[RMDB]
RNA sequence: GGGAACGACUCGAGUAGAGUCGAAAAUCUGCGCAAUCCCAAUGUACGCGCUGUAAUCCUCCGGAUAGGUUUGCACAGCCAUAGUUCCCAGAACUGUUCCCCAGCUAUGACCUAUAAGGAUAAUUUUGAGCCCAUAUAUAUUCGUAUAUAUGGGCUCAAAAGAAACAACAACAACAAC
Reactivity to DMS in 0.01 (KOAc 150mM, MgCl2 10mM, bicine 150mM(pH8.5), 24C), signal-to-noise 1, nucleotides 027 to 126: u040c100u000g000c000g000c040a080a060u010c050c000c010a060a230u020g000u060a030c230g030c040g020c020u000g040u020a100a060u000c040c070u050c040c020g010g000a070u030a020g000g010u020u000u000g050c010a070c090a070g000c110c040a110u030a070g020u000u000c020c000c000a240g020a110a110c020u020g040u000u000c000c000c000c030a040g000c000u020a050u070g000a090c000c100u010a050u000a090a100g000g050a050u070a010a150u000u000u020u000
Reactivity to 2A3 in 0.01 (KOAc 150mM, MgCl2 10mM, bicine 150mM(pH8.5), 24C), signal-to-noise 1, nucleotides 027 to 126: u140c010u090g000c010g020c060a000a050u080c020c000c110a020a000u150g070u170a070c070g020c000g000c000u000g000u040a000a120u040c000c010u060c010c000g000g020a040u040a060g050g010u000u010u110g020c000a020c000a050g000c040c000a000u060a020g060u080u070c020c000c000a010g000a140a090c130u140g000u000u020c000c000c000c000a010g000c030u070a080u190g030a040c000c000u060a020u040a120a150g130g020a090u020a150a070u120u020u030u050